[RMDB]
RNA sequence: GGGAACGACUCGAGUAGAGUCGAAAAGAUAUGGAUUAAGGGAGAAUUCAUGUCGGAAACGACAUGGUUCAUCGAUCUUAAUGUCCUAAGUCAAACUCCAGUCGUAAGUUCGCUUACGACUGGAGAACAUCGCCGAUAUGUUCGCAUAUCGGCGAUGAAAAGAAACAACAACAACAAC
Reactivity to 2A3 in 0.01 (KOAc 150mM, MgCl2 10mM, bicine 150mM(pH8.5), 24C), signal-to-noise 1, nucleotides 027 to 126: g030a020u100a030u130g030g000a000u020u030a010a000g100g110g030a070g000a050a010u200u300c010a010u000g000u000c010g000g050a060a030a010c010g010a000c010a000u010g000g040u000u000c020a080u240c020g040a050u000c000u050u020a070a060u190g130u090c000c010u070a180a000g110u020c070a020a040a110c010u000c000c000a000g000u010c010g020u000a010a010g010u050u180c260g000c230u010u000a000c000g060a000c000u000g000g000a030g000a000a000
Reactivity to DMS in 0.01 (KOAc 150mM, MgCl2 10mM, bicine 150mM(pH8.5), 24C), signal-to-noise 2, nucleotides 027 to 126: g010a050u000a280u000g010g010a050u000u000a020a000g010g000g000a120g000a080a020u000u010c000a000u000g000u000c000g000g000a120a110a140c010g020a000c020a020u000g010g020u000u000c050a150u000c140g020a090u010c010u000u010a020a010u000g000u010c040c000u020a110a100g010u000c060a100a080a200c010u000c000c000a000g000u000c000g010u000a010a000g000u000u020c300g020c010u000u000a010c000g000a000c010u000g010g000a010g000a060a080
Chemical mapping of a 177-nucleotide RNA with 2A3 and DMS. The DMS profile rests on 1,191 reads. It was measured as part of the RMDB library TTRDEL. The reactions ran in a buffer of 150 mM KOAc, 10 mM MgCl2 and 150 mM bicine (pH 8.5), at 24 C.